RNA sequence: GGGAACGACUCGAGUAGAGUCGAAAAAAUGCUUUCUGUGCAUUAUCUUCAUAGUCCUCACAACAGUCCUAUUAAAUUGGUAUAAUUAUCCUCAUUUUGCAGAUUUGGAAGGUGGCAUUUGGGGAGGCCAGUUGUUACUUUUCGAAGUAACAACUGGAAAAGAAACAACAACAACAAC
Reactivity to DMS in 0.01 (KOAc 150mM, MgCl2 10mM, bicine 150mM(pH8.5), 24C), signal-to-noise 2, nucleotides 027 to 126: a040a020u000g010c010u010u010u010c140u010g000u000g030c030a030u000u000a040u000c020u020u020c060a090u010a120g010u000c030c010u020c030a070c080a060a040c130a120g010u000c020c040u000a110u010u010a020a060a100u010u000g000g010u010a050u010a050a080u010u000a100u000c010c030u010c050a040u010u000u000u000g020c040a070g000a150u010u000u010g000g020a090a070g010g010u000g010g030c030a020u000u000u000g020g010g010g010a040g010g020
Reactivity to 2A3 in 0.01 (KOAc 150mM, MgCl2 10mM, bicine 150mM(pH8.5), 24C), signal-to-noise 4, nucleotides 027 to 126: a000a000u080g010c050u070u110u120c050u130g110u050g000c000a000u010u040a040u080c020u100u010c010a020u050a050g050u050c000c020u050c010a050c010a110a040c000a010g080u040c000c010u090a080u210u160a190a130a090u100u090g040g010u130a130u030a210a120u120u120a070u050c000c010u020c020a040u010u050u050u100g000c030a010g050a220u030u090u160g130g010a090a050g080g040u080g030g010c010a000u020u020u040g040g010g000g000a010g040g000
Structure probing data (DMS and 2A3) for a 177-nucleotide construct. It was measured as part of the RMDB library OK2TST. For DMS the reverse transcriptase was MarathonRT. The DMS profile rests on 2,490 reads.